Overview
Chemical mapping of a 177-nucleotide RNA with DMS and 2A3. DMS adducts were read by reverse transcription with MarathonRT. It was measured as part of the RMDB libraries RFM100 and RFMREP. Conditions: 150 mM KOAc, 10 mM MgCl2 and 150 mM bicine (pH 8.5), 24 C. For 2A3 the reverse transcriptase was SuperScript II with manganese.
RNA sequence: GGGAACGACUCGAGUAGAGUCGAAAAGGCUUUUAGCGUGAGGAAAGUACCAAACAGCAGCGGAGUUUUAAACUUUAAAUAGACAGGUCUGAGUGCCUGAACUUGCCUUUUCAUUUUACUUCAUCCUAAGAUCAACCUUUUUCGAAAGGUUGAUCUUAAAAGAAACAACAACAACAAC
Reactivity to DMS in 0.01 (KOAc 150mM, MgCl2 10mM, bicine 150mM(pH8.5), 24C), signal-to-noise 2, nucleotides 027 to 126: g000g000c000u000u010u000u010a070g060c100g000u010g000a300g000g010a110a160a050g010u030a030c010c070a030a150a070c030a080g020c040a060g020c140g010g000a030g010u000u010u000u000a060a120a070c000u020u010u010a030a050a050u040a020g000a200c100a010g020g000u000c010u010g000a140g010u020g020c010c000u000g020a010a080c050u000u000g010c000c000u000u000u000u000c030a060u000u000u000u000a040c020u030u000c080a100u000c010c030u000
Reactivity to 2A3 in 0.01 (KOAc 150mM, MgCl2 10mM, bicine 150mM(pH8.5), 24C), signal-to-noise 7, nucleotides 027 to 126: g020g000c010u040u060u110u200a040g030c050g020u050g010a040g000g070a160a080a050g090u080a100c010c010a060a030a040c030a060g040c010a010g010c050g070g020a040g010u050u040u030u150a120a100a010c020u050u050u090a090a070a060u080a050g070a060c010a010g020g020u020c030u200g170a060g080u260g040c000c000u000g010a030a020c020u030u070g020c000c000u020u000u000u000c020a020u020u020u040u040a040c020u040u070c020a070u020c010c000u010